[RMDB]
RNA sequence: GGGAACGACUCGAGUAGAGUCGAAAAUCAUCAACGGGGUCACUUUCUAAUUCUAACUUAUCGAACAUAAUCCAGUAUUGUGAUUCUAGUUUUUCUAUAAACUUACAGAUACUUCCUGGGUAUGAUGGGAGGGGUAAUAGUUCGCUAUUACCCCUCCAAAAGAAACAACAACAACAAC
Reactivity to DMS in 0.01 (KOAc 150mM, MgCl2 10mM, bicine 150mM(pH8.5), 24C), signal-to-noise 2, nucleotides 027 to 126: u010c060a050u010c010a010a200c160g030g000g060g000u000c030a010c070u020u000u000c030u020a060a070u000u050c110u030a150a030c110u000u080a040u020c220g000a150a210c030a040u010a030a030u020c000c100a050g000u000a040u000u030g020u000g000a060u030u030c030u000a110g000u010u000u000u010u030c120u130a040u050a020a050a010c000u020u050a070c150a050g010a050u040a080c060u000u000c130c010u010g010g000g040u000a050u000g000a230u010g000
Reactivity to 2A3 in 0.01 (KOAc 150mM, MgCl2 10mM, bicine 150mM(pH8.5), 24C), signal-to-noise 4, nucleotides 027 to 126: u080c010a000u060c030a040a010c010g020g000g020g010u050c040a040c050u020u120u000c020u220a080a130u200u070c050u070a080a180c020u160u140a050u180c150g120a090a080c010a090u150a130a050u100c060c030a040g030u100a110u140u140g050u080g050a080u070u000c020u020a040g000u000u020u000u040u130c200u120a230u210a150a050a020c010u080u150a040c020a050g050a000u060a110c030u020u080c010c000u020g000g060g010u030a060u060g070a100u100g100
Structure probing data (DMS and 2A3) for a 177-nucleotide construct. 2A3 adducts were read by reverse transcription with SuperScript II with manganese. In probing experiments dimethyl sulfate is read out at A N1 and C N3, which are open when not base-paired.